[RMDB]
RNA sequence: GGGAACGACUCGAGUAGAGUCGAAAAGAUAUGGAACAUCUUGGACCUCUGGAACUACUUCUUGUGUCGGAAACGACAUGGAAGCCAGAGCUAGAUGUUCCUAAGUCAAACUUGCGUUCGCGCAAGACUCCUUUUGUCUCUUCGGAGACAAAAGGAGAAAAGAAACAACAACAACAAC
Reactivity to 2A3 in 0.01 (KOAc 150mM, MgCl2 10mM, bicine 150mM(pH8.5), 24C), signal-to-noise 1, nucleotides 027 to 126: g020a000u110a010u210g040g030a010a020c000a020u040c000u040u200g100g060a200c080c000u000c010u010g030g000a100a040c070u210a110c010u300u010c020u260u300g030u000g000u000c000g010g000a110a080a090c020g010a000c000a020u040g050g000a020a020g000c000c010a010g000a000g020c000u000a000g010a000u010g000u020u020c000c000u010a030a010g030u000c040a060a110a120c010u000u020g010c010g060u090u060c300g010c000g000c180a010a010g010a130
Reactivity to DMS in 0.01 (KOAc 150mM, MgCl2 10mM, bicine 150mM(pH8.5), 24C), signal-to-noise 1, nucleotides 027 to 126: g000a010u000a300u000g000g000a000a020c000a000u010c000u000u030g070g060a190c300c010u000c000u020g000g000a050a030c040u000a300c040u000u000c000u000u010g090u000g000u000c000g090g000a160a130a200c010g040a020c000a010u000g020g000a000a000g090c000c000a000g000a020g000c000u000a000g040a020u000g000u000u000c000c000u000a010a060g000u010c040a110a170a190c000u000u000g000c020g000u000u020c300g020c010g000c000a000a010g000a300